[RMDB]
Overview: Chemical mapping of a 177-nucleotide RNA with DMS and 2A3. It was measured as part of the RMDB libraries RFM100 and RFMREP. The reactions ran in a buffer of 150 mM KOAc, 10 mM MgCl2 and 150 mM bicine (pH 8.5), at 24 C. 2A3 adducts were read by reverse transcription with SuperScript II with manganese. DMS adducts were read by reverse transcription with MarathonRT.
RNA sequence: GGGAACGACUCGAGUAGAGUCGAAAAGUUCCGGCGCUGUAGGAUGUGGCUGCGGCCGAUUAGGUAGAUGGUGGGGUAACGGCCCACCAUGCCGAUAAUCGGUACAGGUUGUGAGAGCAAGAGCCUGCGGUACUACUCAGUUCGCUGAGUAGUACCGAAAAGAAACAACAACAACAAC
Reactivity to DMS in 0.01 (KOAc 150mM, MgCl2 10mM, bicine 150mM(pH8.5), 24C), signal-to-noise 5, nucleotides 027 to 126: g000u000u000c000c010g010g010c010g020c020u010g010u010a050g010g020a060u010g020u010g010g020c020u010g010c090g000g020c000c010g010a000u000u000a100g000g010u000a120g010a050u010g000g000u000g000g010g020g010u010a120a150c300g000g000c000c000c000a000c010c000a000u000g010c000c000g010a140u020a030a020u000c010g000g000u000a080c050a090g000g010u000u000g020u010g000a100g020a150g010c090a070a080g010a100g010c040c020u000g010
Reactivity to 2A3 in 0.01 (KOAc 150mM, MgCl2 10mM, bicine 150mM(pH8.5), 24C), signal-to-noise 2, nucleotides 027 to 126: g010u020u020c000c000g020g020c040g000c020u070g030u130a070g020g070a130u040g050u050g100g000c010u010g010c030g070g000c000c000g010a000u000u040a020g010g000u000a040g010a180u010g010g000u000g010g000g010g000u000a010a010c000g020g000c000c000c030a000c010c000a010u010g000c000c000g020a060u130a030a000u000c010g000g000u040a070c000a000g020g000u060u030g090u080g070a090g010a030g020c070a090a040g020a000g050c010c020u040g010